Chemical mapping of a 177-nucleotide RNA with 2A3 and DMS. As a SHAPE reagent, 2A3 marks flexible, mostly unpaired nucleotides at the ribose 2'-OH. The data come from the RNA Mapping Database (RMDB), library OK1LIB. DMS adducts were read by reverse transcription with MarathonRT. Conditions: 150 mM KOAc, 10 mM MgCl2 and 150 mM bicine (pH 8.5), 24 C. The DMS profile rests on 50,147 reads.
RNA sequence: GGGAACGACUCGAGUAGAGUCGAAAAACUAGUAUGUACACGAUGAGACUGCCGUGUCGUCUAGACUGCGGAUCCAAUAAUCUCAGAUCUGCGAGAUAUUGUCUCAGGAGUACGAGACAAGUACUCAGUGAUAUGACUACUUCGGUGGUCGUAUCACAAAAGAAACAACAACAACAAC
Reactivity to 2A3 in 0.01 (KOAc 150mM, MgCl2 10mM, bicine 150mM(pH8.5), 24C), signal-to-noise 9, nucleotides 027 to 126: a000c010u020a010g070u120a040u050g090u090a010c010a000c020g040a050u130g030a020g090a070c070u100g110c070c000g000u010g000u000c010g000u000c010u020a040g040a150c040u060g000c000g010g010a010u000c020c040a070a060u210a140a120u090c070u030c090a020g000a050u000c010u010g010c030g030a010g010a010u180a040u040u080g010u000c000u000c010a010g000g060a040g040u060a030c040g010a000g020a040c040a040a020g020u020a030c000u000c020a010
Reactivity to DMS in 0.01 (KOAc 150mM, MgCl2 10mM, bicine 150mM(pH8.5), 24C), signal-to-noise 9, nucleotides 027 to 126: a120c010u010a010g000u050a010u000g010u060a010c010a020c030g020a110u020g010a110g010a090c090u020g010c100c010g020u000g010u000c010g010u000c030u020a010g000a220c090u020g010c020g000g000a010u000c040c170a100a120u030a010a110u020c130u010c150a150g000a020u000c030u000g000c030g000a060g000a110u020a060u010u010g000u000c010u000c000a060g000g000a060g010u010a030c040g000a090g010a080c160a050a060g000u020a050c010u000c010a150